[RMDB]
RNA sequence: GGGAACGACUCGAGUAGAGUCGAAAAGAAGGUAUGAACGUUGGAAGGCGCUUCCGAGGAGUUGGCGGACGGAUGUGGCCGUGUGAGCGGAAUUCUUUCAUACCAAGAACGGGAUAACCGGAAGAAAGGGAAUAUCAUACUUCGGUAUGAUAUUCCCAAAAGAAACAACAACAACAAC
Reactivity to DMS in 0.01 (KOAc 150mM, MgCl2 10mM, bicine 150mM(pH8.5), 24C), signal-to-noise 3, nucleotides 027 to 126: g000a150a070g000g020u010a000u000g000a100a070c200g010u000u010g000g040a150a130g010g000c090g000c010u000u000c050c030g010a080g020g010a140g020u000u010g030g050c100g000g000a160c010g000g020a070u020g040u010g020g030c000c020g000u010g040u030g000a070g000c010g000g000a060a130u000u020c020u000u010u000c000a010u000a030c040c000a040a110g020a090a130c060g010g010g000a140u020a110a140c030c000g040g020a100a150g000a060a160a100
Reactivity to 2A3 in 0.01 (KOAc 150mM, MgCl2 10mM, bicine 150mM(pH8.5), 24C), signal-to-noise 3, nucleotides 027 to 126: g140a110a060g020g010u070a010u030g000a060a000c060g000u050u050g080g140a120a090g080g000c020g000c010u070u010c010c000g050a110g100g030a150g020u060u030g040g040c060g030g050a010c010g000g010a000u030g020u060g090g000c000c030g020u040g020u070g040a040g000c050g010g030a030a020u100u070c010u020u030u030c010a000u000a020c000c000a010a020g010a060a030c040g040g000g000a040u100a170a090c000c000g010g030a050a050g080a060a120a060